[RMDB]
RNA sequence: GGGAACGACUCGAGUAGAGUCGAAAAUGCCACUUUCACAGGAAAGGAGAGGGACAAGCUGUACAGCGACAAGAUCAACCCCAUCAUGGGGCAGUGUCUGCUGCUGGUGAGGGAGUGUGCGCACCCAUCCUGCGGAAACAUUCGUGUUUCCGCAGGAAAAAGAAACAACAACAACAAC
Reactivity to DMS in 0.01 (KOAc 150mM, MgCl2 10mM, bicine 150mM(pH8.5), 24C), signal-to-noise 2, nucleotides 027 to 126: u000g020c020c020a060c010u010u010u010c090a140c070a110g010g000a040a100a070g040g020a160g000a130g000g000g020a090c110a060a100g010c020u000g000u000a160c060a000g000c000g000a020c030a070a070g000a140u000c150a250a110c010c000c000c000a110u010c230a120u010g030g000g000g000c010a010g000u000g010u000c020u000g000c030u020g000c010u000g000g010u000g020a100g020g000g010a050g020u000g000u030g000c040g020c190a120c020c010c010a130
Reactivity to 2A3 in 0.01 (KOAc 150mM, MgCl2 10mM, bicine 150mM(pH8.5), 24C), signal-to-noise 2, nucleotides 027 to 126: u050g070c010c000a040c040u040u090u000c090a070c000a080g160g090a040a080a030g080g050a060g010a030g060g000g010a060c050a080a010g060c030u070g030u140a080c030a000g000c030g010a010c010a030a070g000a050u040c030a020a170c030c020c000c020a040u200c040a080u300g000g000g020g070c010a020g050u080g050u080c020u130g020c000u010g000c040u020g060g000u140g020a110g000g010g000a020g000u020g000u060g030c030g020c000a050c010c010c000a050
Structure probing data (DMS and 2A3) for a 177-nucleotide construct. For 2A3, 1,319 sequencing reads were counted. For DMS the reverse transcriptase was MarathonRT. The reactions ran in a buffer of 150 mM KOAc, 10 mM MgCl2 and 150 mM bicine (pH 8.5), at 24 C. The data come from the RNA Mapping Database (RMDB), library OK2TRN. DMS (dimethyl sulfate) methylates the pairing face of unpaired adenines and cytosines.